[RMDB]
An RNA of 177 nucleotides, treated with DMS and 2A3 and read out base by base. For 2A3, 1,811 sequencing reads were counted. For 2A3 the reverse transcriptase was SuperScript II with manganese. The reactions ran in a buffer of 150 mM KOAc, 10 mM MgCl2 and 150 mM bicine (pH 8.5), at 24 C. The data come from the RNA Mapping Database (RMDB), library OK2TRN. The DMS profile rests on 2,060 reads.

RNA sequence: GGGAACGACUCGAGUAGAGUCGAAAAACAAAAUAAGCAUGCCUGUUGUAGCUUACUCUGGUGAGGCUAAAAGCUUUCUAAGAGAAGCUUUAGAAUAUGCCAAAAACAAAGAAUAUGACAAGGCAGAGUGAAUGAAAGAUUUCGAUCUUUCAUUCACAAAAGAAACAACAACAACAAC
Reactivity to DMS in 0.01 (KOAc 150mM, MgCl2 10mM, bicine 150mM(pH8.5), 24C), signal-to-noise 3, nucleotides 027 to 126: a100c050a130a110a050a150u000a110a120g010c170a130u000g020c030c040u010g000u000u000g020u000a030g000c120u020u000a090c090u010c100u000g000g040u010g000a250g010g010c000u000a040a050a010a030g000c010u000u000u000c040u030a150a110g020a210g010a020a000g010c000u010u000u000a050g010a100a090u010a090u000g000c020c000a020a070a040a060a060c070a030a030a030g010a080a110u000a030u000g010a000c010a040a070g000g020c000a070g000a100
Reactivity to 2A3 in 0.01 (KOAc 150mM, MgCl2 10mM, bicine 150mM(pH8.5), 24C), signal-to-noise 2, nucleotides 027 to 126: a000c030a010a020a030a060u280a090a060g070c060a030u010g000c000c000u020g010u050u010g000u010a040g010c050u040u080a030c030u040c010u060g000g000u030g020a040g050g000c000u010a040a140a000a030g010c020u040u080u020c080u160a200a040g120a010g000a110a000g010c000u000u000u000a010g010a040a020u130a080u240g000c000c010a040a060a000a040a050c060a030a110a000g040a110a050u050a000u040g000a020c060a070a080g010g000c010a000g030a010